The record gives the reactivity of an RNA of 177 nucleotides to 2A3 and DMS.
The 2A3 profile rests on 4,940 reads.

[RMDB]
RNA sequence: GGGAACGACUCGAGUAGAGUCGAAAAGAUUGAGAAGAUUCUGAAUCUACUCAAGUAAGUCGAAAUGGGAGCAGCCAUUUCAGUAAUUAUUGAUUUGCUUGCUACUGCCACGGAAGUAUCCGCCGCACAGUACGGUAUCAUUCGUGAUACCGUACUGAAAAGAAACAACAACAACAAC
Reactivity to 2A3 in 0.01 (KOAc 150mM, MgCl2 10mM, bicine 150mM(pH8.5), 24C), signal-to-noise 4, nucleotides 027 to 126: g020a020u060u070g020a010g030a090a030g060a080u150u060c130u300g060a050a030u000c000u020a060c000u010c030a000a030g070u100a060a040g040u080c060g010a010a030a050u090g020g020g030a110g060c040a010g040c030c010a010u010u020u010c020a000g020u050a120a300u230u240a050u090u110g030a030u050u020u040g030c050u050u020g000c010u020a050c030u030g050c020c030a030c020g010g010a060a010g030u060a100u090c020c070g020c020c000g020c020a070
Reactivity to DMS in 0.01 (KOAc 150mM, MgCl2 10mM, bicine 150mM(pH8.5), 24C), signal-to-noise 4, nucleotides 027 to 126: g010a140u000u000g010a100g010a190a090g010a040u000u010c100u000g000a060a040u000c000u010a100c010u010c000a030a050g000u000a090a060g010u000c050g000a050a070a070u010g010g000g010a070g020c080a070g020c100c020a020u000u000u000c010a020g020u000a150a100u010u000a060u010u000g000a030u000u000u000g010c160u020u000g010c030u000a060c030u000g010c020c050a070c040g000g000a050a110g010u000a060u010c010c010g010c040c040g000c150a150
Source: RMDB library OK2TRN, as collected in RNAgym.
Conditions: 150 mM KOAc, 10 mM MgCl2 and 150 mM bicine (pH 8.5), 24 C.
For 2A3 the reverse transcriptase was SuperScript II with manganese.